RNA sequence: GGGAACGACUCGAGUAGAGUCGAAAAGCUGCGUGAGCCAUGGUAAAUGUCGCUGCGAUCCACGUCUUGUCGCAAAUCAACAAGAGAUUGAUCACGCUGCACGAUGGUUGGCCCUUCGGUCGGCUUGUCAAGGUACGCUGUUCGCGGCGUGCCUUGAAAAAGAAACAACAACAACAAC
Reactivity to 2A3 in 0.01 (KOAc 150mM, MgCl2 10mM, bicine 150mM(pH8.5), 24C), signal-to-noise 7, nucleotides 027 to 126: g010c000u010g000c000g020u030g020a010g020c020c010a030u040g020g050u130a040a050a050u090g020u030c030g000c010u020g000c010g010a010u010c010c030a070c020g070u000c020u020u040g010u000c010g000c040a020a010a050u040c010a000a040c010a040a040g040a010g010a120u010u030g000a010u020c010a000c050g000c010u010g000c010a010c000g050a020u040g030g020u020u040g020g010c000c020c000u030u060c040g010g010u010c000g000g000c000u000u000g030
Reactivity to DMS in 0.01 (KOAc 150mM, MgCl2 10mM, bicine 150mM(pH8.5), 24C), signal-to-noise 9, nucleotides 027 to 126: g010c010u000g000c010g010u010g000a060g000c080c030a040u010g020g010u030a050a090a070u010g010u010c080g010c090u010g010c030g010a030u010c050c090a080c130g000u010c050u010u010g010u000c060g000c100a070a100a100u040c110a080a040c050a070a060g000a100g000a110u010u000g000a110u000c020a040c050g010c010u000g000c020a070c000g010a080u030g010g000u000u010g000g000c020c010c080u010u010c090g010g020u000c050g000g000c010u000u000g010